[RMDB]
RNA sequence: GGGAACGACUCGAGUAGAGUCGAAAAUUGGAGCUAUUGGCUCUUGACACUUAAGGCUAUAAAUAUAGGCGACAAAGCUCCUCUUCCUAUAUCGUUGGGACAAGUGCAUAAAAGGCCAACUGGAUUCCACAUGUAGCAGUUUCGACUGCUACAUGUGAAAAGAAACAACAACAACAAC
Reactivity to 2A3 in 0.01 (KOAc 150mM, MgCl2 10mM, bicine 150mM(pH8.5), 24C), signal-to-noise 3, nucleotides 027 to 126: u040u040g000g000a000g020c020u070a090u200u070g050g010c030u040c000u090u060g050a020c030a020c040u050u110a090a060g070g010c020u070a030u050a300a240a030u220a070u050a130g030g050c030g030a060c070a010a140a010g000c010u010c000c000u000c010u020u010c010c020u040a030u000a010u120c050g020u030u050g030g000g000a040c040a090a050g020u040g050c040a010u140a120a150a030a000g070g030c000c020a020a010c050u080g050g050a140u110u030c040
Reactivity to DMS in 0.01 (KOAc 150mM, MgCl2 10mM, bicine 150mM(pH8.5), 24C), signal-to-noise 6, nucleotides 027 to 126: u000u010g000g000a020g010c010u000a110u000u000g010g000c010u010c070u000u000g000a150c080a060c050u000u010a130a130g000g010c040u000a060u000a080a080a080u000a070u000a040g010g020c300g010a070c090a030a070a080g010c030u000c030c020u000c120u000u000c010c010u000a060u000a080u010c080g010u010u010g010g000g000a080c130a020a030g010u000g000c050a080u000a060a070a100a120g000g000c010c000a010a050c150u000g020g000a130u010u000c070
Notes: The record gives the reactivity of an RNA of 177 nucleotides to 2A3 and DMS. For 2A3, 3,309 sequencing reads were counted. For DMS the reverse transcriptase was MarathonRT.